[RMDB]
RNA sequence: GGGAACGACUCGAGUAGAGUCGAAAAUGGGACUGGUUUUGGAGGGCAAAACCACGGCCCACGGCCAGGGGAAUAGUCCUCGAAAUGUACCACUUCAGACGGGACUGCUGAACGCACUGCCUGUGCGGUCAUCACGGGUGUUCGCACCCGUGAUGACAAAAGAAACAACAACAACAAC
Reactivity to 2A3 in 0.01 (KOAc 150mM, MgCl2 10mM, bicine 150mM(pH8.5), 24C), signal-to-noise 5, nucleotides 027 to 126: u080g000g000g050a020c040u020g070g040u040u030u020u050g180g010a140g030g070g040c000a000a000a020a030c030c020a020c040g040g030c010c000c010a050c100g030g000c050c000a110g020g030g000g000a090a220u080a190g060u010c000c000u040c000g030a040a040a050u180g020u130a080c000c040a060c050u090u050c020a040g020a090c050g010g010g070a020c010u030g030c020u050g050a090a020c020g030c020a010c020u130g100c030c020u030g020u020g020c020g040
Reactivity to DMS in 0.01 (KOAc 150mM, MgCl2 10mM, bicine 150mM(pH8.5), 24C), signal-to-noise 2, nucleotides 027 to 126: u030g000g000g000a090c060u020g010g020u000u010u010u010g040g030a000g020g010g030c030a040a050a130a080c020c020a060c160g000g000c000c000c150a130c200g000g040c010c020a190g000g020g010g000a100a080u010a120g010u000c000c000u000c010g010a000a100a090u010g010u000a090c020c030a090c100u000u000c050a040g020a130c040g000g000g000a050c030u010g000c120u030g020a050a160c000g020c060a010c020u030g000c070c070u020g020u000g060c040g010
Structure probing data (2A3 and DMS) for a 177-nucleotide construct. Values cover nucleotides 27 to 126. The 2A3 profile rests on 3,256 reads. The DMS profile rests on 2,964 reads. For 2A3 the reverse transcriptase was SuperScript II with manganese.